Conditions: 150 mM KOAc, 10 mM MgCl2 and 150 mM bicine (pH 8.5), 24 C.
This 177-nucleotide RNA was probed chemically with DMS and 2A3.
Reactivities are given for positions 27 through 126.
It was measured as part of the RMDB library OK1LIB.
Values are in units of 0.01, from 0 to 300, in steps of 10.

RNA sequence: GGGAACGACUCGAGUAGAGUCGAAAAUGGUAAGUUUAAUAUUUCUAAUAUUAUGGCGGCAAUGAUUGCGGUGUGGAGUAAAGGUACAUCUUUAGAAACGAUUAUUAAAGCUGUUGAAAAUUUAGAAAUUCUAUUGCUAUUUCGAUAGCAAUAGAAUAAAAGAAACAACAACAACAAC
Reactivity to DMS in 0.01 (KOAc 150mM, MgCl2 10mM, bicine 150mM(pH8.5), 24C), signal-to-noise 2, nucleotides 027 to 126: u010g000g020u010a060a120g000u000u000u030a060a040u020a080u000u000u050c010u050a020a060u020a090u020u010a100u010g000g010c050g000g000c140a040a040u010g000a060u020u020g000c090g030g010u000g000u010g010g000a090g030u020a040a040a070g000g020u020a060c090a070u000c060u010u000u020a060g000a120a120a180c100g000a040u040u010a050u010u030a030a180a100g010c050u010g000u000u030g000a030a050a090a190u010u010u010a060g000a070a080
Reactivity to 2A3 in 0.01 (KOAc 150mM, MgCl2 10mM, bicine 150mM(pH8.5), 24C), signal-to-noise 3, nucleotides 027 to 126: u080g020g020u160a130a130g020u050u050u180a090a050u060a130u010u090u000c010u060a040a030u060a080u230u000a150u110g000g000c030g000g000c030a020a050u110g040a120u050u090g010c030g020g010u010g030u080g060g000a080g030u070a030a090a020g030g010u010a010c000a020u030c000u020u170u100a130g050a070a050a020c040g030a070u030u030a040u030u080a180a090a030g010c040u000g000u000u000g010a060a130a110a130u040u110u090a020g030a040a240
High 2A3 reactivity points to a flexible backbone, as in loops and unpaired stretches.